[RMDB]
RNA sequence: GGGAACGACUCGAGUAGAGUCGAAAAGAGGCGCUUCGGCGCCUCAGUUCGACGCUUCGGCGUCGAACACAUGUGUCGUACGCGACACAUGAGCUCAACGUGAGUUGAGCAACACGACGUACGCGUCGUGAAGCCAACGUACGCGUUGGCACGUGUCGUACGCGACACGAGAGCACGUUCGCGUGCUCAACUUCGUCUUCGGACGAAGAUGCUGUGUAUCAUCCUGCCCGUCGGAGGAGCCACAGUUAAAUUCAAAAGACAAGGCUAAUAUCGCAUUCGUGCGAUAUAAAAGAAACAACAACAACAAC
Reactivity to 2A3 in 0.01 (KOAc 150mM, MgCl2 10mM, bicine 150mM(pH8.5), 24C), signal-to-noise 9, nucleotides 027 to 266: g010a000g020g010c030g010c050u090u120c300g170g000c000g010c030c000u000c000a000g000u000u000c000g000a000c000g010c010u060u090c280g130g000c000g000u000c000g000a000a000c010a020c030a100u230g000u000g000u000c000g010u020a020c290g000c000g020a000c000a000c000a010u110g080a020g010c020u030c070a000a000c010g070u080g090a130g020u010u010g020a040g020c000a000a010c000a000c000g010a000c000g020u070a000c270g020c010g140u000c000g000u000g030a040a010g000c000c000a010a010c010g050u120a050c200g030c000g070u000u000g000g000c000a010c070g000u000g000u000c010g000u010a020c250g000c000g020a000c000a000c000g090a090g000a000g010c000a000c010g020u110u120c220g030c010g120u010g000c000u000c000a010a030c000u000u000c000g000u000c000u020u050c200g120g000a000c010g000a000a000g010a010u150g010c000u000g000u000g010u010a020u050c010a010u000c000c000u000g000c000c000c010g000u010c000g000g000a000g000g000a000g010c020c000a000c000a000g030u030u080a040a080a110u250u200c110a020a000a000a000g010a010c040a070a090g010g000c000u020a040
Reactivity to DMS in 0.01 (KOAc 150mM, MgCl2 10mM, bicine 150mM(pH8.5), 24C), signal-to-noise 6, nucleotides 027 to 266: g000a030g010g020c000g030c010u010u040c210g040g030c000g020c000c010u000c000a000g010u000u000c010g020a020c010g020c000u000u030c210g000g010c010g020u010c000g010a020a030c020a120c220a050u010g000u000g010u000c000g030u000a300c160g020c000g000a010c000a010c000a130u010g010a150g010c020u010c010a010a010c000g000u010g000a210g010u000u000g000a060g020c010a080a180c010a010c010g010a020c010g020u010a090c210g030c020g010u000c000g000u000g000a080a240g000c000c010a000a010c030g010u010a100c160g020c010g020u000u010g010g000c010a030c070g020u000g000u000c010g000u010a300c150g000c000g010a010c000a010c000g000a120g000a010g000c000a000c010g010u000u020c220g010c010g030u000g000c000u000c010a060a130c000u000u000c000g010u000c000u010u020c200g020g010a010c000g000a010a000g010a120u020g010c010u000g010u000g000u000a040u000c010a010u000c000c000u000g000c000c000c150g010u000c010g000g010a020g000g000a030g000c080c000a010c000a030g010u000u010a050a090a110u010u020c140a020a010a030a030g020a030c030a080a300g000g010c000u000a170

Record summary: The data come from the RNA Mapping Database (RMDB), library POS240. Structure probing data (2A3 and DMS) for a 307-nucleotide construct. For DMS the reverse transcriptase was MarathonRT. For 2A3, 46,811 sequencing reads were counted. Conditions: 150 mM KOAc, 10 mM MgCl2 and 150 mM bicine (pH 8.5), 24 C.